[RMDB]
RNA sequence: GGGAACGACUCGAGUAGAGUCGAAAAACGGCACCCGUGUCGAGGUCCACCUGGACCGGGAUUUCCGGGUUCUGGACACCGAACCGGCCGACGGGGACGGCGGUUAGCAUCGGCGCAUGCCCGCACCCAAGUAAGGGUGUUUCGACACCCUUACUUGAAAAGAAACAACAACAACAAC
Reactivity to 2A3 in 0.01 (KOAc 150mM, MgCl2 10mM, bicine 150mM(pH8.5), 24C), signal-to-noise 9, nucleotides 027 to 126: a000c020g010g000c030a030c020c050c030g020u040g020u060c040g030a040g030g030u050c020c020a110c060c080u080g020g010a040c040c040g020g030g000a160u120u070u060c030c000g020g000g000u060u030c060u070g040g010a030c030a030c050c020g020a060a030c010c000g080g020c020c010g080a130c100g050g010g020g030a030c020g010g020c060g020g010u080u080a030g020c050a060u050c040g070g000c030g000c030a020u050g020c000c010c000g010c010a070c000c000
Reactivity to DMS in 0.01 (KOAc 150mM, MgCl2 10mM, bicine 150mM(pH8.5), 24C), signal-to-noise 6, nucleotides 027 to 126: a140c180g000g010c080a110c130c090c070g010u030g000u000c000g010a110g010g020u010c060c070a140c180c130u020g000g000a020c060c030g020g000g020a180u010u020u020c070c010g020g000g000u010u010c050u020g000g010a050c070a120c050c030g010a060a060c040c010g000g000c020c020g000a100c100g010g000g010g010a090c040g000g000c020g010g000u010u030a080g000c110a090u000c020g010g000c060g000c050a080u000g010c020c000c020g000c170a110c020c030